[RMDB]
An RNA of 177 nucleotides, treated with 2A3 and read out base by base.

RNA sequence: GGGAACGACUCGAGUAGAGUCGAAAAGCUGAUCAUGGCCUCAUUGAUGCUGAUGGCGGGAGCCGCUUCAGACCGGUUUGGCCGCAAGCGCCUGCUGAUGACUGGUCUGGUGAUCUUCGGGCUGGUCGCAGCGGAGCUCAUUCGUGAGCUCCGCUGCAAAAGAAACAACAACAACAAC
Reactivity to 2A3 in 0.01 (KOAc 150mM, MgCl2 10mM, bicine 150mM(pH8.5), 24C), signal-to-noise 2, nucleotides 027 to 126: g020c040u030g010a080u080c030a060u080g030g010c000c000u090c040a080u000u090g070a090u190g030c010u060g010a180u140g060g000c010g000g030g000a010g050c010c010g020c000u080u070c010a050g020a060c040c010g000g000u000u000u000g000g050c040c000g010c040a150a050g040c010g000c030c000u080g000c040u150g030a140u100g000a050c050u040g070g000u010c010u010g040g050u050g060a060u060c000u070u030c030g010g010g000c020u040g080g000u020c040
The RNA was probed in 150 mM KOAc, 10 mM MgCl2 and 150 mM bicine (pH 8.5) at 24 C.